Chemical mapping of a 207-nucleotide RNA with 2A3 and DMS. For 2A3 the reverse transcriptase was SuperScript II with manganese. It was measured as part of the RMDB library M2RFPK. The RNA was probed in 150 mM KOAc, 10 mM MgCl2 and 150 mM bicine (pH 8.5) at 24 C. For DMS, 2,544 sequencing reads were counted.
RNA sequence: GGGAACGACUCGAGUAGAGUCGAAAAACGGUCGUACGCGACCGAGGCGCGGCUAGGUCAACGGACCGAACAAUGGCAUCCCGCAUUCUGCCAUCCGCCGCGCAGCUUCUUCUCAAACGGUGCGGAAAAAAGUAGGACACCUUCGGGUGUCCUACAAGGUGUAAUAUCAGUUCGCUGAUAUUACACCAAAAGAAACAACAACAACAAC
Reactivity to 2A3 in 0.01 (KOAc 150mM, MgCl2 10mM, bicine 150mM(pH8.5), 24C), signal-to-noise 4, nucleotides 027 to 156: a000c020g000g000u000c010g030u050a040c230g000c020g130a010c000c000g000a050g000g000c000g000c010g010g010c000u010a000g000g000u010c040a190a150c300g270g020a000c020c000g000a000a000c000a010a010u010g000g000c010a030u110c030c020c000g020c000a020u300u130c010u030g000c000c000a000u020c010c020g000c000c000g000c000g000c000a000g000c000u150u090c000u070u010c010u000c020a080a100a000c040g010g000u000g000c000g000g000a040a010a020a080a000a020g000u000a000g000g000a000c000a000c010c010u020u070c190g050g000g000u000g000u000c000c000u000a000c000a000a000
Reactivity to DMS in 0.01 (KOAc 150mM, MgCl2 10mM, bicine 150mM(pH8.5), 24C), signal-to-noise 1, nucleotides 027 to 156: a120c020g000g020u020c030g010u000a080c140g020c050g010a030c000c000g010a030g010g040c000g030c070g010g010c040u000a070g020g030u030c030a120a290c210g010g000a070c010c010g000a120a100c300a150a050u000g010g030c020a110u000c050c010c030g010c020a050u000u000c050u020g010c010c010a040u000c060c090g050c000c000g000c000g030c030a020g040c020u000u000c090u000u010c030u000c090a060a080a000c060g040g020u000g040c000g020g020a030a010a020a190a080a170g020u000a000g000g000a040c010a000c000c000u000u040c300g060g030g060u000g000u000c000c000u000a010c000a030a020